[RMDB]
RNA sequence: GGGAACGACUCGAGUAGAGUCGAAAAUGUAUUCUUCUAAUGGGGUAGCUGUCUCCAAUUUUUGCGUAAUGGAUUAGUGCCACUGUCUAGUAGUAGUUUGACGACCUCGACAUUAUUACAAUGCUCAUUAAAAAGGUAUGCGUGUAAAGCAUUAUUCUCUGAAGAUAACAUUCGUGUUAUCUUCAGAAAAAGAAACAACAACAACAAC
Reactivity to DMS in 0.01 (KOAc 150mM, MgCl2 10mM, bicine 150mM(pH8.5), 24C), signal-to-noise 5, nucleotides 027 to 156: u000g020u000a100u000u000c020u010u000c050u010a110a130u000g010g030g030g040u000a110g020c050u000g010u000c020u000c020c030a040a110u000u000u000u010u010g020c060g020u010a100a120u000g010g000a090u000u000a060g020u000g010c080c030a100c060u000g000u010c040u000a110g020u000a100g010u000a070g010u010u000u000g020a110c060g020a080c030c030u000c020g030a050c030a030u010u010a120u000u010a090c120a040a040u010g010c020u000c030a100u000u000a030a050a090a100a070g020g000u000a050u000g010c020g010u010g010u010a070a060a130g010c050a050u000u010a170u000u000c060
Reactivity to 2A3 in 0.01 (KOAc 150mM, MgCl2 10mM, bicine 150mM(pH8.5), 24C), signal-to-noise 6, nucleotides 027 to 156: u100g030u030a130u060u050c040u070u030c050u090a090a060u090g030g000g020g020u030a050g040c020u020g040u030c010u000c040c020a040a050u070u060u040u070u070g050c050g050u130a080a090u090g020g010a040u040u060a030g030u010g060c020c010a060c040u030g010u020c020u020a030g010u000a010g010u010a020g020u050u040u110g070a030c010g010a020c000c020u020c020g030a030c010a030u030u120a040u050u060a150c060a070a030u050g020c010u020c060a040u070u190a100a070a040a020a000g080g000u100a030u050g020c050g000u060g080u120a060a090a020g020c000a010u030u040a050u200u060c070